[RMDB]
RNA sequence: GGGAACGACUCGAGUAGAGUCGAAAAGAUAUGGAUCCCUCUUUCUUUUGACGGGACAUCGGAAACGAUGUCCGAUAAGAAAUGGAUCCUAAGUCAAAACGAAACGCGGCUUCGGCCGCGUUUCGAACAGUUAUAUGACGUUCGCGUCAUAUAACUGAAAAGAAACAACAACAACAAC
Reactivity to 2A3 in 0.01 (KOAc 150mM, MgCl2 10mM, bicine 150mM(pH8.5), 24C), signal-to-noise 3, nucleotides 027 to 126: g010a030u100a050u140g010g010a000u000c000c020c010u010c010u040u020u000c010u040u200u080u190g300a150c150g170g000g010a000c010a000u000c010g020g040a100a040a000c010g010a010u000g010u000c010c000g010a010u000a010a000g010a010a010a060u210g000g000a010u000c010c000u010a100a010g010u020c010a010a030a090a080c010g000a000a000a010c000g000c020g010g000c000u150u210c300g070g000c020c020g050c000g000u000u000u000c000g000a000a000
Reactivity to DMS in 0.01 (KOAc 150mM, MgCl2 10mM, bicine 150mM(pH8.5), 24C), signal-to-noise 4, nucleotides 027 to 126: g000a040u000a300u000g010g000a010u000c000c000c020u000c020u000u000u000c000u010u000u000u010g010a210c190g010g000g020a000c000a000u000c000g010g010a120a090a150c010g020a010u000g010u000c000c000g000a010u000a000a020g010a010a090a010u000g000g000a010u000c000c000u000a020a050g010u000c030a110a070a100a190c010g000a000a020a020c000g030c010g020g000c010u000u010c230g010g010c000c000g000c000g000u000u000u000c000g000a030a140